The record gives the reactivity of an RNA of 177 nucleotides to DMS. DMS adducts were read by reverse transcription with MarathonRT. The reactions ran in a buffer of 150 mM KOAc, 10 mM MgCl2 and 150 mM bicine (pH 8.5), at 24 C.
[RMDB]
RNA sequence: GGGAACGACUCGAGUAGAGUCGAAAAGAUAUGGACUAGUAUACAUCCUUUCCUGAAGAUCUUGGAUUUAUAUUCGGAAACGAAUAUUGUCAGAUCCAGGAGAAGGAUGUAUACUAGUCCUAAGUCAGCUUUACUAGUUGUUCGCAACUAGUAAAGCAAAAGAAACAACAACAACAAC
Reactivity to DMS in 0.01 (KOAc 150mM, MgCl2 10mM, bicine 150mM(pH8.5), 24C), signal-to-noise 2, nucleotides 027 to 126: g010a040u000a300u010g010g020a010c010u000a010g020u010a010u010a030c030a010u000c010c010u000u010u010c000c000u000g000a230a160g010a000u010c000u000u010g020g000a030u000u050u010a000u000a000u000u000c010g000g000a120a160a270c000g020a000a030u000a010u000u010g000u000c000a020g010a030u000c000c020a030g010g010a040g010a010a020g000g030a010u000g000u000a000u010a010c010u010a000g000u000c000c000u010a000a070g000u010c040a120